[RMDB]
RNA sequence: GGGAACGACUCGAGUAGAGUCGAAAAUGUCUCCAUUCUCAGUCAUUUUGAUUCGAGUUUUAGUAGUCUCUUAAAGUUGGUCAAUACUCCAUCCAUUUUUGAAACGUCAGCUGCAAAAUUCGGUGACUGUAAGUUUUGUGUUCGCACAAAACUUACAAAAAGAAACAACAACAACAAC
Reactivity to DMS in 0.01 (KOAc 150mM, MgCl2 10mM, bicine 150mM(pH8.5), 24C), signal-to-noise 2, nucleotides 027 to 126: u030g000u000c000u010c000c090a130u030u000c040u020c020a020g020u040c020a040u030u020u050u030g030a030u000u010c090g020a070g040u000u000u010u040a100g000u000a070g000u000c030u010c060u010u020a010a070a120g010u000u000g030g000u020c140a040a130u020a110c050u000c020c050a050u020c060c040a090u010u030u050u020u000g000a040a130a080c170g020u000c110a050g000c020u010g000c040a060a060a030a070u000u030c130g000g000u040g020a060c030
Reactivity to 2A3 in 0.01 (KOAc 150mM, MgCl2 10mM, bicine 150mM(pH8.5), 24C), signal-to-noise 6, nucleotides 027 to 126: u120g040u020c000u000c050c010a050u090u010c040u010c030a000g010u010c020a050u040u070u120u250g140a100u070u100c050g000a000g020u020u040u030u020a020g000u020a010g030u000c010u000c020u100u130a100a080a060g040u110u050g040g020u070c020a100a150u030a160c060u050c020c000a060u000c030c020a110u040u040u010u080u160g080a090a100a000c050g050u030c050a030g020c010u030g000c020a060a040a070a080u040u030c030g040g010u030g020a020c000

Chemical mapping of a 177-nucleotide RNA with DMS and 2A3. It was measured as part of the RMDB library OK1LIB. The RNA was probed in 150 mM KOAc, 10 mM MgCl2 and 150 mM bicine (pH 8.5) at 24 C. Values are in units of 0.01, from 0 to 300, in steps of 10.